Structure probing data (2A3 and DMS) for a 177-nucleotide construct. The reactions ran in a buffer of 150 mM KOAc, 10 mM MgCl2 and 150 mM bicine (pH 8.5), at 24 C. For 2A3, 2,602 sequencing reads were counted. Source: RMDB library M2PK50, as collected in RNAgym. DMS adducts were read by reverse transcription with MarathonRT. Reactivities are given for positions 27 through 126.
RNA sequence: GGGAACGACUCGAGUAGAGUCGAAAACCCACGACUUUCGAGUCGUGGGAAAUAUAAUCUGCGGUAAAUAAUUAGCUCCGCUUACCGCUGAAGCGGAGCAUACACGUCUAGGAUUCGUCCUAGACAAUAUUGAUCUCAUGUUCGCAUGAGAUCAAUAAAAAGAAACAACAACAACAAC
Reactivity to 2A3 in 0.01 (KOAc 150mM, MgCl2 10mM, bicine 150mM(pH8.5), 24C), signal-to-noise 2, nucleotides 027 to 126: c000c000c000a000c000g000a000c010u040u110u180c180g070a020g000u000c000g000u020g000g020g010a000a080a010u140a020u020a040a190u070c040u170g050c030g070g100u070a050a150a010u110a050a140u210u190a050g000c010u010c000c000g000c040u000u020a090c020c030g000c100u090g020a000a010g010c020g000g000a000g000c000a010u000a000c050a030c060g020u000c000u000a010g000g010a030u010u050c110g040u000c020c000u000a010g000a000c000a010a010
Reactivity to DMS in 0.01 (KOAc 150mM, MgCl2 10mM, bicine 150mM(pH8.5), 24C), signal-to-noise 2, nucleotides 027 to 126: c000c010c000a020c000g010a010c000u000u000u010c170g010a010g020u010c010g010u000g020g000g000a000a030a030u000a110u000a110a090u000c070u000g000c050g000g000u010a070a090a100u000a080a110u040u010a130g000c000u000c000c000g000c020u000u010a050c020c120g000c070u000g030a020a030g010c000g000g000a010g030c010a040u000a040c210a100c140g000u000c000u000a000g000g010a040u000u010c210g010u000c020c000u000a000g010a010c010a020a060